[RMDB]
RNA sequence: GGGAACGACUCGAGUAGAGUCGAAAAUUAAAGGAGGAGGAGGAGGAGGUACGCCUCCAGCUGCUCAGCCGACGUACCGCACACACGCCUUAACGGCAAAGAGGAGCAAAAGGGAAACCAAAAAAAAGAUCACAAUCAAGUUCGCUUGAUUGUGAUCAAAAGAAACAACAACAACAAC
Reactivity to DMS in 0.01 (KOAc 150mM, MgCl2 10mM, bicine 150mM(pH8.5), 24C), signal-to-noise 1, nucleotides 027 to 126: u020u030a070a080a130g020g010a030g010g000a040g000g010a070g010g050a070g000g010a100g000g020u000a000c060g000c000c000u000c030c040a110g000c040u010g000c000u000c050a080g030c010c010g020a110c050g000u000a010c000c000g000c220a060c220a060c240a070c130g000c020c040u000u010a080a170c070g000g010c000a030a060a080g000a000g010g000a000g010c010a030a030a020a100g010g000g000a090a110a100c010c130a000a000a000a040a000a000a080a040
The record gives the reactivity of an RNA of 177 nucleotides to DMS. In probing experiments dimethyl sulfate is read out at A N1 and C N3, which are open when not base-paired. Source: RMDB library M2PK90, as collected in RNAgym. Values cover nucleotides 27 to 126. Conditions: 150 mM KOAc, 10 mM MgCl2 and 150 mM bicine (pH 8.5), 24 C. For DMS the reverse transcriptase was MarathonRT.